[RMDB]
RNA sequence: GGGAACGACUCGAGUAGAGUCGAAAAUAUAAACUGCUCAAUAAAAUUGGUGAAGGGGCAUUUUCCAGAGUAUUUAAAGCAGUAGGCAUCAACACGGAUGACCAAGCUCCUGUUGCCAUCAAAGCAAGCCAUUAAAUUUAUUCGUAAAUUUAAUGGCAAAAGAAACAACAACAACAAC
Reactivity to DMS in 0.01 (KOAc 150mM, MgCl2 10mM, bicine 150mM(pH8.5), 24C), signal-to-noise 5, nucleotides 027 to 126: u010a100u010a100a110a070c020u010g000c000u010c180a100a110u010a070a090a130a170u010u000g020g030u010g010a070a040g000g000g020g010c030a100u000u000u000u000c010c010a160g000a140g010u010a040u000u010u000a040a110a050g000c010a030g000u010a080g000g010c010a010u000c020a040a100c250a170c240g010g000a030u000g000a120c020c030a090a150g010c030u000c010c000u000g020u010u000g000c010c000a050u000c200a030a100a100g020c250a080a140
Reactivity to 2A3 in 0.01 (KOAc 150mM, MgCl2 10mM, bicine 150mM(pH8.5), 24C), signal-to-noise 2, nucleotides 027 to 126: u160a000u040a050a150a000c000u030g000c000u000c050a110a030u120a170a090a040a080u170u040g020g000u010g040a020a010g000g000g020g050c000a000u040u070u000u020c000c000a000g020a000g150u120a170u090u220u120a100a070a010g000c000a000g000u050a040g020g010c020a010u000c000a060a130c070a030c190g120g010a000u000g070a110c000c020a030a000g000c000u010c000c000u040g150u070u020g000c050c010a050u100c040a030a040a060g300c020a020a020